[RMDB]
RNA sequence: GGGAACGACUCGAGUAGAGUCGAAAAUGCUGGAAUAGACGAUAAUCACCUUUCCCGAUGUGCCGCGAAUAGCGAUAGGUGUCUUCUGGACACCCAACAUCAUACAAUUGCAACGCACUCCGCUGCCGAAACGGUCCGUGUUCGCACGGACCGUUUCAAAAGAAACAACAACAACAAC
Reactivity to 2A3 in 0.01 (KOAc 150mM, MgCl2 10mM, bicine 150mM(pH8.5), 24C), signal-to-noise 1, nucleotides 027 to 126: u290g030c250u160g000g010a210a000u010a000g100a120c140g070a160u230a140a060u080c060a000c050c050u000u040u090c010c020c020g000a000u010g000u010g000c000c000g030c000g200a090a040u050a160g000c000g000a040u040a080g000g000u000g000u000c000u100u000c010u220g190g000a000c000a000c000c000c000a010a010c000a130u030c000a030u010a100c110a040a300u040u080g000c050a040a040c010g000c000a050c000u000c000c000g000c010u090g000c100c080